[RMDB]
RNA sequence: GGGAACGACUCGAGUAGAGUCGAAAAGCCACCGUUCGCGGUGGCAACACGUUACUACGGUAACGUGAGUAUUCCUCUACGGAGGAAUACAACGUAGACCGGUGACGGUCUACGACUGGAUCUUCGGAUCCAGAAGACUCACGUUCGCGUGAGUCAGAUAUCACGUACGCGUGAUAUCAGCUUAUACUUCGGUAUAAGCAACUAUGACUUCGGUCAUAGAACCUCUGCGUGAGCAGAGGAAAGGUGGAUGUUACCAUAAACAUUAUAGACUCUAAUUCGUUAGAGUCAAAAGAAACAACAACAACAAC
Reactivity to DMS in 0.01 (KOAc 150mM, MgCl2 10mM, bicine 150mM(pH8.5), 24C), signal-to-noise 3, nucleotides 027 to 266: g010c000c000a000c000c000g010u000u020c170g050c020g010g030u000g010g030c010a020a040c020a000c000g000u000u010a000c000u000a100c180g010g000u000a000a010c000g010u000g010a160g000u000a000u000u000c010c010u000c000u010a110c190g020g000a010g000g010a010a000u000a000c000a140a180c030g000u000a000g010a010c010c020g010g000u030g000a120c000g010g000u000c000u000a000c000g010a130c010u000g000g000a010u000c010u000u020c230g010g000a010u000c000c000a020g000a300a130g020a020c010u010c000a020c010g010u010u020c240g010c000g030u010g000a010g010u000c010a020g000a000u000a000u010c000a000c000g020u010a100c250g040c030g000u000g000a000u000a000u000c000a130g000c000u000u000a000u000a010c000u000u030c150g020g020u000a010u000a000a000g000c000a190a140c020u000a000u000g000a010c000u000u020c200g020g000u000c000a000u000a000g000a230a160c020c010u000c020u000g000c010g000u030g000a240g000c000a000g050a010g000g000a020a040a080g010g020u000g000g000a030u000g000u000u010a040c020c020a140u010a020a000a050c010a010u000u000a120u020a150
Reactivity to 2A3 in 0.01 (KOAc 150mM, MgCl2 10mM, bicine 150mM(pH8.5), 24C), signal-to-noise 9, nucleotides 027 to 266: g000c000c000a000c010c000g030u050u080c290g000c010g100g000u000g000g000c000a000a010c000a000c000g000u000u000a000c010u010a020c200g130g000u000a000a000c000g000u000g000a000g000u000a000u000u000c030c010u010c010u030a080c300g120g000a000g000g000a000a000u000a000c020a050a020c020g000u000a000g000a000c000c000g010g040u060g060a030c010g000g000u000c000u000a000c000g000a010c000u000g000g000a000u010c010u020u100c260g110g000a000u000c000c000a000g020a020a040g000a000c000u000c000a000c000g030u080u070c250g030c000g110u000g000a000g000u000c000a000g000a000u000a000u000c000a000c010g020u040a020c300g050c010g130u000g000a000u000a000u000c010a010g000c000u000u000a000u000a000c010u030u080c250g090g000u000a000u000a000a000g000c000a000a040c010u000a000u000g000a000c000u020u060c300g110g000u000c000a000u000a000g040a030a030c010c010u020c010u000g010c020g060u120g090a050g000c010a000g010a000g000g000a060a100a030g030g010u040g070g020a020u020g010u040u050a040c010c020a040u070a050a020a000c000a010u050u080a120u180a220